An RNA of 207 nucleotides, treated with DMS and 2A3 and read out base by base.

[RMDB]
RNA sequence: GGGAACGACUCGAGUAGAGUCGAAAAUGAUCUUGGCUCACUGCAACCUCUGCCUCCCAGUUUCAAGCAAUUCUCCUGCCUCAGCCUCUCAAGUAGCUGGGAUAACAGGUGCCUGCCACCAUGCCUGGCUAAUAUUUUUGUAUUUUUAGUGGAGAUGACACAAGAUGAGAUUCGUCUCAUCUUGUGUAAAAGAAACAACAACAACAAC
Reactivity to DMS in 0.01 (KOAc 150mM, MgCl2 10mM, bicine 150mM(pH8.5), 24C), signal-to-noise 1, nucleotides 027 to 156: u010g020a030u020c020u020u010g020g000c010u010c010a100c050u010g010c040a080a060c030c020u000c020u000g040c020c050u000c010c000c010a080g010u010u010u010c100a030a070g000c020a050a120u000u000c020u000c000c020u010g030c000c020u000c030a060g020c010c000u000c020u000c050a070a080g020u010a030g020c000u000g000g020g010a060u000a040a080c030a030g020g030u000g000c020c060u010g020c040c030a040c000c020a080u010g020c030c000u010g000g030c000u030a010a030u000a040u000u000u010u000u000g030u010a040u000u000u000u000u000a070g030u000g000g010a100g020a120u000g010
Reactivity to 2A3 in 0.01 (KOAc 150mM, MgCl2 10mM, bicine 150mM(pH8.5), 24C), signal-to-noise 1, nucleotides 027 to 156: u200g020a030u040c030u030u040g040g000c000u000c010a080c020u040g000c020a040a090c040c000u040c060u080g010c020c060u010c030c020c000a020g020u020u050u040c060a060a030g020c020a050a040u050u050c050u040c020c020u030g050c010c000u000c050a010g000c040c000u040c000u020c030a060a060g000u040a020g020c000u000g000g000g040a020u060a120a050c050a090g020g000u000g000c000c010u080g060c070c000a010c030c000a040u080g050c000c000u000g000g000c010u040a040a000u080a090u060u080u010u030u070g030u020a080u040u120u000u060u060a040g050u020g020g060a060g020a050u070g010
For DMS, 3,423 sequencing reads were counted. The RNA was probed in 150 mM KOAc, 10 mM MgCl2 and 150 mM bicine (pH 8.5) at 24 C. It was measured as part of the RMDB library OK3TST.